[RMDB]
RNA sequence: GGGAACGACUCGAGUAGAGUCGAAAAAGCCAGCGGGCUGUCUUCCCAGGUGUAGAUCACCUAUUCUAACUUCACCUGUUUUGAUACCCUGAUGAGGAAAGUCCCAGGACUUGUCAGCUGGGAUAGGCUUUAGUCGCUACUUCGGUAGCGACUAAAGAAAAGAAACAACAACAACAAC
Reactivity to DMS in 0.01 (KOAc 150mM, MgCl2 10mM, bicine 150mM(pH8.5), 24C), signal-to-noise 3, nucleotides 027 to 126: a040g040c000c010a130g020c150g020g020g030c030u010g010u010c070u010u000c000c020c030a040g000g000u000g020u040a060g010a130u040c090a090c030c020u010a080u030u000c070u010a070a130c020u020u010c030a020c020c020u000g020u010u040u050u000g000a090u020a110c050c060c010u010g000a060u010g010a060g020g000a110a120a140g000u000c010c030c050a160g000g000a070c040u000u010g020u010c060a060g000c120u030g010g000g000a060u000a070g000g000
Reactivity to 2A3 in 0.01 (KOAc 150mM, MgCl2 10mM, bicine 150mM(pH8.5), 24C), signal-to-noise 3, nucleotides 027 to 126: a000g060c060c030a060g160c070g100g000g000c000u000g050u020c010u000u000c020c000c000a020g000g000u020g020u060a050g030a130u180c040a050c030c020u000a110u100u030c050u030a040a150c030u050u030c040a030c000c010u020g150u050u020u040u160g110a050u160a150c020c000c010u020g020a110u030g050a050g100g070a150a040a020g030u000c030c000c000a070g030g040a110c070u110u130g080u210c020a020g000c010u030g020g000g000a010u010a000g010g000
The record gives the reactivity of an RNA of 177 nucleotides to DMS and 2A3. The RNA was probed in 150 mM KOAc, 10 mM MgCl2 and 150 mM bicine (pH 8.5) at 24 C. Values are in units of 0.01, from 0 to 300, in steps of 10. For DMS the reverse transcriptase was MarathonRT. For DMS, 4,309 sequencing reads were counted.